[RMDB]
RNA sequence: GGGAACGACUCGAGUAGAGUCGAAAAGAUAUGGAUAACACGGCGCCAUCUCUAAGGACAUGUUGAACGGUUCGGAAACGAACCGUCAACAACAGCCUUAGAGGAUGGCGCCGUGUUAUCCUAAGUCCAUCUUAUAUCGCUUCGGCGAUAUAAGAUGAAAAGAAACAACAACAACAAC
Reactivity to DMS in 0.01 (KOAc 150mM, MgCl2 10mM, bicine 150mM(pH8.5), 24C), signal-to-noise 2, nucleotides 027 to 126: g000a070u010a300u000g010g000a010u000a020a010c000a040c000g000g000c000g040c010c000a000u000c000u000c000u000a030a010g000g020a100c070a150u000g000u000u000g000a100a030c000g000g010u020u000c000g010g010a170a120a240c000g010a000a010c000c000g010u000c010a060a060c000a010a030c130a100g000c000c010u000u000a010g000a040g030g010a030u000g000g000c000g020c000c000g000u000g000u000u000a000u000c000c000u000a000a100g010u000c020